[RMDB]
RNA sequence: GGGAACGACUCGAGUAGAGUCGAAAAAAAAAGAUAUGGACGUGUACUCGCGAAGAACUAUAGUCGCUAUAUUCGGAAACGAAUAUAAAAGUCUAUAGGGAGCGAGAACACGUCCUAAGUCAAAAAACUGUGUAGAAUAGUUCGCUAUUCUACACAGAAAAGAAACAACAACAACAAC
Reactivity to DMS in 0.01 (KOAc 150mM, MgCl2 10mM, bicine 150mM(pH8.5), 24C), signal-to-noise 1, nucleotides 027 to 126: a010a100a040a130a060g010a010u000a260u000g000g010a010c000g000u010g010u010a110c000u000c020g000c000g000a100a160g010a080a140c000u000a000u000a000g020u000c030g000c300u000a010u000a010u020u000c000g000g010a080a060a060c000g020a050a010u000a000u010a000a030a090a170g010u000c010u000a000u000a010g000g000g000a050g010c000g010a030g000a060a010c000a010c000g010u000c000c000u000a010a040g000u010c010a000a040a050a100a090a100
Background
This 177-nucleotide RNA was probed chemically with DMS. The reactions ran in a buffer of 150 mM KOAc, 10 mM MgCl2 and 150 mM bicine (pH 8.5), at 24 C.